[RMDB]
Chemical mapping of a 177-nucleotide RNA with DMS and 2A3. 2A3 adducts were read by reverse transcription with SuperScript II with manganese. The RNA was probed in 150 mM KOAc, 10 mM MgCl2 and 150 mM bicine (pH 8.5) at 24 C. The data come from the RNA Mapping Database (RMDB), library OK1LIB.
RNA sequence: GGGAACGACUCGAGUAGAGUCGAAAAGAAAGAACAAACAAACAAAAGAAAAUGACCAUUUCUUUACCGGCUUUAAUGCCCGGGGAUAGAAAUCGAAGGCCAUACGGACAGCUAGGUCAAAUGCCGACGAGUAGGUGGACUUCGGUCCAUCUACUCGAAAAGAAACAACAACAACAAC
Reactivity to DMS in 0.01 (KOAc 150mM, MgCl2 10mM, bicine 150mM(pH8.5), 24C), signal-to-noise 5, nucleotides 027 to 126: g020a080a100a080g020a120a100c100a060a070a110c190a110a100a140c160a100a040a090a060g000a060a020a100a040u010g010a010c020c010a250u000u020u000c010u000u010u050a070c000c000g010g000c000u010u040u060a100a090u020g010c240c010c050g020g000g010g000a030u010a030g000a000a050a000u000c240g010a110a150g000g020c000c010a060u010a070c020g000g000a010c020a110g000c010u000a090g010g000u020c010a060a030a080u060g010c000c000g000a300
Reactivity to 2A3 in 0.01 (KOAc 150mM, MgCl2 10mM, bicine 150mM(pH8.5), 24C), signal-to-noise 9, nucleotides 027 to 126: g090a020a070a010g120a070a020c070a060a070a010c050a040a090a010c040a050a140a080a030g160a060a150a030a060u120g000a000c010c010a010u010u000u000c000u010u050u060a030c000c000g010g010c020u160u200u210a300a130u240g030c020c030c020g000g010g000g010a030u070a140g030a010a010a010u080c120g050a190a080g060g000c010c010a020u050a080c000g010g000a000c010a000g000c010u040a040g000g000u000c000a010a010a030u120g000c000c000g030a050
DMS adducts were read by reverse transcription with MarathonRT. High 2A3 reactivity points to a flexible backbone, as in loops and unpaired stretches.